[RMDB]
Background: The record gives the reactivity of an RNA of 177 nucleotides to 2A3 and DMS. It was measured as part of the RMDB library OK2TRN. Conditions: 150 mM KOAc, 10 mM MgCl2 and 150 mM bicine (pH 8.5), 24 C. For DMS, 3,946 sequencing reads were counted.
RNA sequence: GGGAACGACUCGAGUAGAGUCGAAAAAACAGCAAUGUCAAGCUGUAGUAGUUUGUGAUUGUGGCAGCUUUUUGUGUUGGUCAUGGAUCAUAAUUCUAAACGUUUUAAUAUACAGUAAUCCAUAUGACAAUACUACCCACUUCGGUGGGUAGUAUUGAAAAGAAACAACAACAACAAC
Reactivity to 2A3 in 0.01 (KOAc 150mM, MgCl2 10mM, bicine 150mM(pH8.5), 24C), signal-to-noise 3, nucleotides 027 to 126: a000a000c100a070g000c080a120a090u100g060u160c030a100a010g000c020u030g030u020a020g050u010a000g000u000u050u040g000u010g000a010u040u000g000u020g040g010c020a030g020c020u210u150u080u300u300g220u050g000u060u070g180g040u060c020a010u040g180g000a010u020c010a000u000a110a050u110u050c060u070a050a130a110c030g000u000u020u050u150a170a080u150a020u030a130c030a050g110u100a040a020u030c030c010a060u090a140u230g000a010
Reactivity to DMS in 0.01 (KOAc 150mM, MgCl2 10mM, bicine 150mM(pH8.5), 24C), signal-to-noise 4, nucleotides 027 to 126: a070a020c030a010g010c080a090a110u000g010u000c110a110a150g000c000u000g010u010a060g010u010a040g010u000u000u000g020u000g010a020u000u000g020u010g000g000c010a030g000c010u000u000u010u000u000g020u010g020u000u000g030g000u010c020a010u010g010g010a020u000c010a020u000a020a050u010u000c040u000a030a080a120c110g000u000u010u000u020a050a130u010a140u010a050c030a080g020u000a090a080u000c020c010a090u000a090u010g010a190